The data come from the RNA Mapping Database (RMDB), library OK2TST. An RNA of 177 nucleotides, treated with 2A3 and DMS and read out base by base. 2A3 adducts were read by reverse transcription with SuperScript II with manganese. The RNA was probed in 150 mM KOAc, 10 mM MgCl2 and 150 mM bicine (pH 8.5) at 24 C. For DMS the reverse transcriptase was MarathonRT.
[RMDB]
RNA sequence: GGGAACGACUCGAGUAGAGUCGAAAAGCAUGCGGUUUCUGGACGUCAAGCGGACACAGUGAAGCUGCUGUUGAAGAUGGGAGCCAAUAUUAACAUGCAGGAUGCUUAUGGCCGCACAAGUUUAUGCCUGAUUCUGAACGUUCGCGUUCAGAAUCAGAAAAGAAACAACAACAACAAC
Reactivity to 2A3 in 0.01 (KOAc 150mM, MgCl2 10mM, bicine 150mM(pH8.5), 24C), signal-to-noise 1, nucleotides 027 to 126: g030c000a040u120g000c000g030g000u040u070u000c020u070g030g020a020c030g070u120c060a080a030g010c000g060g030a050c060a000c000a130g040u050g160a110a020g020c010u010g000c020u050g020u010u150g020a030a030g110a060u140g030g050g000a010g100c020c010a070a030u150a090u010u110a040a020c000a010u130g010c000a010g080g160a030u050g070c000u120u100a060u100g030g000c010c010g000c000a020c000a050a060g020u040u050u090a090u150g060c000
Reactivity to DMS in 0.01 (KOAc 150mM, MgCl2 10mM, bicine 150mM(pH8.5), 24C), signal-to-noise 2, nucleotides 027 to 126: g010c040a030u000g060c110g010g000u010u000u010c040u010g010g020a120c160g010u000c220a100a140g000c050g030g000a070c070a060c160a070g060u000g010a140a120g000c030u010g020c010u000g010u000u010g000a070a080g010a100u000g000g020g050a140g020c070c010a040a090u020a080u000u000a030a080c040a050u010g040c040a080g000g000a090u010g020c030u000u000a110u000g030g000c050c030g030c040a060c100a040a130g000u000u010u000a030u020g010c090